[RMDB]
RNA sequence: GGGAACGACUCGAGUAGAGUCGAAAAUGCUUCGACAACGGGGGCACGAGGUUCGAUAGAAGUUAUUUAUGGUUCCACAGCGGUUUCCUGGGCCUCGACAACUGAGGGCGCAUCCGUUGAAGGCUGCCAUAGUCAGCCUGUUCGCAGGCUGACUAUGAAAAGAAACAACAACAACAAC
Reactivity to DMS in 0.01 (KOAc 150mM, MgCl2 10mM, bicine 150mM(pH8.5), 24C), signal-to-noise 6, nucleotides 027 to 126: u010g000c010u000u010c030g000a200c070a030a070c080g010g000g000g000g020c020a090c040g000a080g010g010u010u010c020g010a080u030a060g010a040a080g020u010u040a030u010u010u020a080u020g010g010u000u010c010c030a130c090a080g000c090g000g000u010u010u010c030c010u010g010g020g000c010c000u000c020g000a120c200a050a080c110u020g010a090g010g000g010c050g010c060a060u010c020c020g010u000u010g010a080a120g000g010c040u010g000c120
Reactivity to 2A3 in 0.01 (KOAc 150mM, MgCl2 10mM, bicine 150mM(pH8.5), 24C), signal-to-noise 9, nucleotides 027 to 126: u080g000c010u020u050c020g050a030c020a070a000c020g010g010g000g010g020c030a010c060g030a020g010g030u040u040c040g050a050u090a160g100a100a030g060u150u160a120u100u180u080a150u160g090g010u050u030c020c010a050c020a060g090c060g060g000u030u040u060c010c020u050g010g020g010c000c000u020c010g040a070c040a160a030c060u140g030a090g030g060g000c040g000c030a030u000c010c020g000u010u040g030a060a020g050g000c020u030g020c010